An RNA of 177 nucleotides, treated with 2A3 and DMS and read out base by base. The RNA was probed in 150 mM KOAc, 10 mM MgCl2 and 150 mM bicine (pH 8.5) at 24 C. DMS adducts were read by reverse transcription with MarathonRT.

RNA sequence: GGGAACGACUCGAGUAGAGUCGAAAAGGAUGCAGGGUAGUCGAUUGACAAACUACCUCAUGUGCAGUUACACAUUGUCAAUCUAGACGCCUUCUGGUCUUCAGAAGGCGUCUCGACAUCCGAAUCGCUACAACAUUGAAUUCGUUCAGUGUUGUAGAAAAGAAACAACAACAACAAC
Reactivity to 2A3 in 0.01 (KOAc 150mM, MgCl2 10mM, bicine 150mM(pH8.5), 24C), signal-to-noise 9, nucleotides 027 to 126: g020g010a010u060g050c140a030g000g020g050u070a100g030u070c050g050a100u030u110g020a030c040a020a100a030c050u070a060c020c020u050c020a070u130g090u080g060c110a060g030u120u200a070c050a000c020a100u040u070g020u030c010a010a020u010c020u050a010g000a010c000g000c020c000u000u000c000u010g080g050u120c110u280u130c130a000g000a000a000g000g000c000g000u000c000u000c000g000a000c000a010u000c000c000g020a020a020u050c040g000
Reactivity to DMS in 0.01 (KOAc 150mM, MgCl2 10mM, bicine 150mM(pH8.5), 24C), signal-to-noise 9, nucleotides 027 to 126: g000g010a020u000g010c190a230g010g010g010u000a060g020u000c080g010a110u000u000g010a050c060a050a070a060c070u000a050c050c030u000c160a070u010g020u000g020c070a070g010u010u010a160c110a060c140a110u000u000g010u000c030a030a050u000c060u000a040g000a010c000g010c000c000u000u000c000u000g000g000u010c200u010u010c000a010g000a010a010g000g010c000g000u000c000u000c040g010a050c020a020u000c010c010g000a120a070u000c080g000
For DMS, 81,821 sequencing reads were counted. DMS (dimethyl sulfate) methylates the pairing face of unpaired adenines and cytosines. For 2A3 the reverse transcriptase was SuperScript II with manganese. The 2A3 profile rests on 80,144 reads.